[RMDB]
RNA sequence: GGGAACGACUCGAGUAGAGUCGAAAAAGUAACUUCUUGUGACAAAGGAUUUUUUGGAGGCGAGACUGUGACUCAUUCUGAAUACCGACCUCCUUUGGAAUUUAAAGAUUGCGAGAAUGCAAUAAGAAUUUAAUCAUUUAUUCGUAAAUGAUUAAAUAAAAGAAACAACAACAACAAC
Reactivity to 2A3 in 0.01 (KOAc 150mM, MgCl2 10mM, bicine 150mM(pH8.5), 24C), signal-to-noise 1, nucleotides 027 to 126: a020g090u040a060a020c000u040u000c000u030u020g010u000g010a020c030a030a110a060g060g000a050u030u000u000u120u260u180g000g010a050g000g050c010g010a080g000a050c010u000g000u070g090a010c010u020c150a030u230u080c030u060g050a080a050u060a080c000c030g180a300c040c090u100c000c000u000u040u000g030g000a020a070u000u020u060a100a120a080g080a210u000u040g020c000g010a020g040a040a000u040g020c010a030a060u080a150a090g040a050
Reactivity to DMS in 0.01 (KOAc 150mM, MgCl2 10mM, bicine 150mM(pH8.5), 24C), signal-to-noise 4, nucleotides 027 to 126: a100g000u000a120a150c090u000u000c010u000u000g020u000g000a100c060a080a100a200g000g000a010u000u000u000u000u000u000g000g010a040g010g000c040g030a130g000a060c090u000g010u010g010a130c110u010c060a070u010u000c050u010g010a090a100u010a110c200c030g010a120c050c020u000c010c010u000u010u000g010g010a050a030u000u010u010a050a130a170g000a070u000u000g020c000g010a050g000a050a010u010g010c060a040a060u010a080a150g010a100